An RNA of 177 nucleotides, treated with 2A3 and read out base by base. 2A3 adducts were read by reverse transcription with SuperScript II with manganese. Conditions: 150 mM KOAc, 10 mM MgCl2 and 150 mM bicine (pH 8.5), 24 C.

RNA sequence: GGGAACGACUCGAGUAGAGUCGAAAAUUUCCUUUGUAUAUUACAUUAAUCCAUAUAAGAAAAUCUCUUUUAAUGAGGAGUGAUGUAGUUACAAACUCUCCAGAGCCAUAAUUAGAGCAAACUAAUUCAUACGGCAAAUGUUCGCAUUUGCCGUAUGAAAAGAAACAACAACAACAAC
Reactivity to 2A3 in 0.01 (KOAc 150mM, MgCl2 10mM, bicine 150mM(pH8.5), 24C), signal-to-noise 2, nucleotides 027 to 126: u030u000u020c040c010u070u020u020g020u000a130u000a000u160u000a010c000a000u000u000a000a040u020c010c020a030u030a020u040a190a000g050a010a200a160a180u040c060u000c000u060u030u080u040a120a130u120g120a070g120g000a020g030u040g010a000u000g000u000a000g000u000u000a000c010a000a030a050c050u040c000u010c030c020a060g010a030g070c020c000a040u030a160a070u180u050a040g010a000g070c010a070a090a020c000u090a020a070u000u010